Notes:
Chemical mapping of a 177-nucleotide RNA with 2A3 and DMS. For 2A3 the reverse transcriptase was SuperScript II with manganese. Source: RMDB libraries RFM100 and RFMREP, as collected in RNAgym. The RNA was probed in 150 mM KOAc, 10 mM MgCl2 and 150 mM bicine (pH 8.5) at 24 C. For 2A3, 1,038 sequencing reads were counted.
RNA sequence: GGGAACGACUCGAGUAGAGUCGAAAAGUGAAGGUACUGAGUAAGAGCAAGUAUGUUAGGACCCGAAAGAUGGUGAACUAUGCCUGGAUAGGGUGAAGUCAGAGGAAACUCUGAUGGAAGCUCGUAGGAGCCGUUCAUAUUUCGAUAUGAACGGCUCAAAAGAAACAACAACAACAAC
Reactivity to 2A3 in 0.01 (KOAc 150mM, MgCl2 10mM, bicine 150mM(pH8.5), 24C), signal-to-noise 2, nucleotides 027 to 126: g130u110g060a060a030g030g000u060a010c020u060g100a050g120u050a100a040g020a030g100c000a020a040g000u000a020u120g070u060u070a050g000g070a000c000c000c110g050a040a080a000g110a040u130g000g030u060g020a030a050c040u010a020u170g030c020c000u010g060g000a070u160a170g010g000g030u220g030a010a010g000u000c000a000g000a000g020g030a000a000a030c000u000c000u000g000a000u000g000g030a060a000g030c000u000c000g040u080a080g060
Reactivity to DMS in 0.01 (KOAc 150mM, MgCl2 10mM, bicine 150mM(pH8.5), 24C), signal-to-noise 3, nucleotides 027 to 126: g030u040g020a140a110g000g010u000a040c060u000g030a130g000u000a100a060g000a050g030c030a060a090g030u010a050u000g040u000u040a110g010g000a120c010c000c010g000a110a080a120g000a080u000g000g020u000g000a020a030c090u010a100u020g010c030c020u000g000g000a160u020a160g010g000g000u000g000a140a160g000u020c020a000g010a020g000g000a140a030a130c000u000c010u000g020a000u000g010g020a160a160g000c000u000c010g010u050a080g030